[RMDB]
RNA sequence: GGGAACGACUCGAGUAGAGUCGAAAAGAUAUGGACUCUCCCUUUUGACGACCAUCAGUCGGAAACGAUGGUCGAUAAGGGAGGAGUCCUAAGUCAAAAGAGUCCCAUUGUUCGCAAUGGGACUCAACAGGGUCAUUAUGUUCGCAUAAUGACCCUGAAAAGAAACAACAACAACAAC
Reactivity to DMS in 0.01 (KOAc 150mM, MgCl2 10mM, bicine 150mM(pH8.5), 24C), signal-to-noise 2, nucleotides 027 to 126: g020a050u000a300u010g000g000a020c000u000c010u000c000c000c000u000u000u030u010g010a270c190g000a000c010c010a030u000c000a060g030u010c180g040g000a110a170a110c060g010a020u000g010g010u000c020g000a070u000a000a000g000g010g010a030g010g000a000g000u010c000c000u000a000a080g000u020c030a110a120a070a110g020a030g030u010c000c000c000a020u000u000g000u000u010c250g010c000a010a030u000g000g000g000a010c000u000c000a010a070
Reactivity to 2A3 in 0.01 (KOAc 150mM, MgCl2 10mM, bicine 150mM(pH8.5), 24C), signal-to-noise 1, nucleotides 027 to 126: g040a020u050a060u140g000g000a000c000u020c000u000c000c000c000u000u030u000u100g220a080c010g000a010c020c010a000u050c030a080g190u140c160g280g120a130a180a000c050g000a010u010g000g020u000c010g010a000u000a010a010g010g000g010a090g050g020a010g000u000c010c010u010a020a000g050u020c020a000a000a050a220g010a000g000u040c010c020c010a010u010u000g050u030u100c220g030c210a000a010u020g000g040g000a000c000u000c000a010a000
The record gives the reactivity of an RNA of 177 nucleotides to DMS and 2A3. The DMS profile rests on 2,021 reads. The data come from the RNA Mapping Database (RMDB), library TTRDEL. For 2A3, 2,855 sequencing reads were counted.